An RNA of 177 nucleotides, treated with 2A3 and DMS and read out base by base. It was measured as part of the RMDB library OK1LIB. Values are in units of 0.01, from 0 to 300, in steps of 10.

RNA sequence: GGGAACGACUCGAGUAGAGUCGAAAAAGAGCGGUGAUUACUUCAGAGUCUGAGAAGACUCUACAUCCGUCAUCGUUUAAUUAGGACUGGUUUAUUAAGACGGAUGUAGAUAGACCAGUAGGUGAUCGAUACACUUAGUAUUCGUACUGGGUGUAUCAAAAGAAACAACAACAACAAC
Reactivity to 2A3 in 0.01 (KOAc 150mM, MgCl2 10mM, bicine 150mM(pH8.5), 24C), signal-to-noise 9, nucleotides 027 to 126: a000g120a010g020c080g040g050u080g030a040u040u070a040c020u030u060c040a020g020a020g040u000c000u020g010a010g020a100a010g020a010c010u000c000u000a000c000a000u000c010c000g020u000c000a060u080c030g040u030u090u150a140a120u100u140a090g020g040a010c010u020g030g060u070u040u060a110u100u170a160a050g020a010c020g010g010a010u030g000u010a020g010a020u070a010g020a010c000c000a000g010u030a030g030g040u040g010a030u050c030
Reactivity to DMS in 0.01 (KOAc 150mM, MgCl2 10mM, bicine 150mM(pH8.5), 24C), signal-to-noise 9, nucleotides 027 to 126: a060g010a070g010c070g010g010u020g010a060u010u010a040c080u020u010c090a100g010a050g020u000c000u000g000a200g010a140a050g000a040c050u000c000u000a020c020a000u010c020c020g000u000c000a110u030c200g000u010u020u020a050a070u030u020a090g000g010a060c020u010g000g000u010u010u010a050u010u010a080a080g010a030c020g000g000a010u000g000u000a020g000a040u010a040g000a030c010c010a070g010u010a050g010g020u010g000a060u020c070